The record gives the reactivity of an RNA of 177 nucleotides to DMS.
Source: RMDB library TTRDEL, as collected in RNAgym.
For DMS, 1,553 sequencing reads were counted.
For DMS the reverse transcriptase was MarathonRT.
The RNA was probed in 150 mM KOAc, 10 mM MgCl2 and 150 mM bicine (pH 8.5) at 24 C.
[RMDB]
RNA sequence: GGGAACGACUCGAGUAGAGUCGAAAAGAUAUGGACGAGCAACAGCCAUCCAUCGGAAACGAUGGGAUGGACAUGCUCGGUCCUAAGUCAAAACAAGGGCGCUCUGGUUCGCCAGAGCGCCCUUGAACUGUCUAGUACAGUUCGCUGUACUAGACAGAAAAGAAACAACAACAACAAC
Reactivity to DMS in 0.01 (KOAc 150mM, MgCl2 10mM, bicine 150mM(pH8.5), 24C), signal-to-noise 2, nucleotides 027 to 126: g040a020u010a300u000g000g010a080c020g000a020g020c000a050a080c210a190g000c010c000a010u000c000c010a020u010c000g010g000a140a090a110c000g030a000u000g000g020g000a000u000g000g000a030c070a180u000g030c000u000c000g020g020u000c000c020u010a020a120g000u000c010a050a090a150a220c000a020a010g000g000g000c020g020c010u000c000u000g000g030u000u020c250g000c000c010a000g000a030g040c030g000c000c000c000u000u000g000a010a100